Notes: An RNA of 177 nucleotides, treated with 2A3 and read out base by base. The reactions ran in a buffer of 150 mM KOAc, 10 mM MgCl2 and 150 mM bicine (pH 8.5), at 24 C. For 2A3, 1,578 sequencing reads were counted.
RNA sequence: GGGAACGACUCGAGUAGAGUCGAAAAGAAAGAAAGAAGCCUCUUCCUGCCUCUCACUAGCUUCAUCCCUUCCUCCCUAAAUUUUAGUCUGGGAGGGAAGGAGCUAUUGGUGGUCAGGAAUAGCGAAGGCAACUACAGUUUUCGAACUGUAGUUGCCAAAAGAAACAACAACAACAAC
Reactivity to 2A3 in 0.01 (KOAc 150mM, MgCl2 10mM, bicine 150mM(pH8.5), 24C), signal-to-noise 2, nucleotides 027 to 126: g090a010a010a000g100a040a100a000g080a090a000g040c010c000u010c040u000u010c000c000u000g000c000c000u020c000u040c000a010c030u000a000g000c000u000u000c000a020u000c000c000c000u000u080c000c000u090c000c030c000u060a130a180a300u230u210u140u040a020g050u000c020u010g020g030g000a000g000g000g000a010a000g020g010a020g000c000u010a020u010u000g000g000u010g030g020u150c030a000g000g030a000a000u010a030g020c040g030a070a050